This 207-nucleotide RNA was probed chemically with 2A3 and DMS. Conditions: 150 mM KOAc, 10 mM MgCl2 and 150 mM bicine (pH 8.5), 24 C. For DMS, 2,066 sequencing reads were counted. 2A3 adducts were read by reverse transcription with SuperScript II with manganese. Values cover nucleotides 27 to 156.
RNA sequence: GGGAACGACUCGAGUAGAGUCGAAAAUCAUCAAGAAGUAGGCUUAGGCCAAUUGCUUGGUGGUGAAAGUAGGGGGAAGGUAGCACUUCGACGCCUCUAAGUACGCUGUGGGAGUAGUGCUUAAAUCAAAAGCACAGCGACUUCGGUCGCUGUGCAACUGAAAGCAGAAGUUCGCUUCUGCUUUCAGAAAAGAAACAACAACAACAAC
Reactivity to 2A3 in 0.01 (KOAc 150mM, MgCl2 10mM, bicine 150mM(pH8.5), 24C), signal-to-noise 3, nucleotides 027 to 156: u020c000a000u010c000a000a000g020a090a020g050u060a000g030g010c030u120u100a090g140g060c010c000a020a070u070u030g020c010u010u010g000g000u030g000g000u030g020a130a100a010g110u150a040g000g010g000g000g020a000a060g040g010u050a010g030c020a010c050u070u060c020g100a070c050g080c030c000u010c030u040a050a060g030u050a030c060g010c100u050g020u090g110g000g030a060g020u080a010g010u050g000c020u050u090a060a060a060u140c060a060a020a030a020g000c000a000c000a000g000c000g000a000c000u030u050c140g100g000u020c000g000c000u000g000u000g010c010a000a000
Reactivity to DMS in 0.01 (KOAc 150mM, MgCl2 10mM, bicine 150mM(pH8.5), 24C), signal-to-noise 1, nucleotides 027 to 156: u000c000a020u000c020a000a000g000a060a000g020u000a100g040g000c000u000u040a190g110g060c000c010a050a110u070u000g000c000u000u000g000g070u020g000g030u000g000a070a030a120g010u000a140g010g000g020g050g020a070a090g000g020u010a060g040c000a130c040u020u000c060g010a040c040g020c030c010u000c080u010a100a090g040u000a030c060g000c010u000g020u010g030g000g000a150g030u000a140g000u030g000c030u000u010a040a000a210u000c090a040a060a100a190g000c000a010c010a020g020c000g000a040c000u010u000c260g030g000u000c000g030c010u010g010u000g010c050a000a000